[RMDB]
RNA sequence: GGGAACGACUCGAGUAGAGUCGAAAAUGUACAAGUACUUUUCGCGUUAAAAAAGCAUUUUGGAUGUGGAGUGGUUCGAAAGAUCCCUUCAAACAGGAUGUGUUAUCGCGUAAAAGAAACUAAACAUCUCUUAACAAAGAUCAUUCCUUUUUUUGAACUGUCUUAUCCAGUUCGCUGGAUAAGACAGAAAAGAAACAACAACAACAAC
Reactivity to 2A3 in 0.01 (KOAc 150mM, MgCl2 10mM, bicine 150mM(pH8.5), 24C), signal-to-noise 2, nucleotides 027 to 156: u060g010u020a030c040a080a010g020u030a030c010u010u000u020u000c000g000c000g040u050u000a000a070a100a140a110a000g030c030a030u070u000u010u020g160g030a200u120g040u040g280g010a020g010u300g020g000u010u000c010g010a030a030a000g000a010u010c020c000c000u000u010c000a020a030a000c000a000g000g010a010u010g050u030g040u040u030a060u050c000g020c010g110u110a000a000a000a000g000a080a060a000c010u030a030a080a000c000a020u030c010u000c000u030u100a120a060c040a080a130a020g040a120u070c040a050u060u110c000c000u080u060u060u010u010u060u080g060a140a090